[RMDB]
RNA sequence: GGGAACGACUCGAGUAGAGUCGAAAAGGCGUAGGUGUUAUUGGGAUGGAGGUCGGUGUGGCAGCGGACAAAGAGGGCCAGGAACUGGGGGUAGCUCAUCUUAAAGUACUUCAGUAUAUCGCGACAGGCUACCAAUACGAUUCGUCGUAUUGGUAGCAAAAGAAACAACAACAACAAC
Reactivity to 2A3 in 0.01 (KOAc 150mM, MgCl2 10mM, bicine 150mM(pH8.5), 24C), signal-to-noise 5, nucleotides 027 to 126: g080g000c070g020u100a050g000g060u060g050u070u110a150u140u080g040g010g010a050u050g030g050a080g040g030u080c070g010g030u070g010u050g110g000c060a020g010c020g020g020a020c050a010a110a020g060a080g000g010g030c000c030a030g040g010a050a020c030u030g000g010g030g000g030u010a030g010c020u010c040a090u020c050u070u180a060a030a030g040u010a050c020u030u050c010a030g030u040a030u060a040u160c070g010c020g080a040c030a010g110
Reactivity to DMS in 0.01 (KOAc 150mM, MgCl2 10mM, bicine 150mM(pH8.5), 24C), signal-to-noise 4, nucleotides 027 to 126: g000g010c060g030u010a110g000g000u000g010u020u020a100u000u020g010g000g000a050u020g000g000a090g020g010u010c070g010g000u000g010u030g000g000c060a070g020c040g030g000a070c140a050a070a060g020a120g000g010g000c070c040a020g000g010a080a090c080u000g030g020g000g010g010u000a100g010c050u010c050a080u010c040u010u040a060a050a080g020u010a050c030u020u000c080a090g010u000a090u030a090u010c070g000c060g010a060c110a110g000

This 177-nucleotide RNA was probed chemically with 2A3 and DMS. For DMS the reverse transcriptase was MarathonRT. Reactivities are given for positions 27 through 126. It was measured as part of the RMDB library OK1LIB.